[RMDB]
RNA sequence: GGGAACGACUCGAGUAGAGUCGAAAACAAAAGGCGCAUUUCCAUUGGUCCACGUCAUCAUUAGUGACAUGUUCGAGCGUCAAAGCUUCAAAUUCAGGAAUUGACCAGGUUUGGGCACUACAUAAAAUGCAAUAAUGCAGUUCGCUGCAUUAUUGCAAAAAGAAACAACAACAACAAC
Reactivity to DMS in 0.01 (KOAc 150mM, MgCl2 10mM, bicine 150mM(pH8.5), 24C), signal-to-noise 2, nucleotides 027 to 126: c060a120a100a100a060g000g000c030g000c030a170u000u020u020c020c020a200u020u010g020g020u010c020c050a100c130g010u010c000a030u000c130a120u020u020a080g000u000g010a060c030a050u000g000u000u000c080g000a090g020c000g010u000c130a070a080a100g000c020u000u010c110a080a050a050u010u000c090a180g020g000a060a080u030u000g000a110c010c000a090g010g020u000u000u000g010g000g000c030a120c120u020a000c190a070u020a060a040a010a070
Reactivity to 2A3 in 0.01 (KOAc 150mM, MgCl2 10mM, bicine 150mM(pH8.5), 24C), signal-to-noise 1, nucleotides 027 to 126: c040a000a140a010a000g020g000c050g020c030a050u030u030u090c000c000a020u000u080g010g000u000c040c030a050c060g050u020c030a060u020c030a060u070u210a050g030u040g050a010c010a010u090g000u000u070c020g040a000g030c010g060u050c050a110a000a000g020c050u210u180c050a110a040a080u200u130c040a020g040g130a090a070u100u050g030a020c000c000a010g010g030u030u020u020g010g010g000c020a010c080u090a030c050a050u240a110a070a000a040

Background: Conditions: 150 mM KOAc, 10 mM MgCl2 and 150 mM bicine (pH 8.5), 24 C. The record gives the reactivity of an RNA of 177 nucleotides to DMS and 2A3. Values cover nucleotides 27 to 126. The DMS profile rests on 1,221 reads. The 2A3 profile rests on 1,009 reads. For DMS the reverse transcriptase was MarathonRT.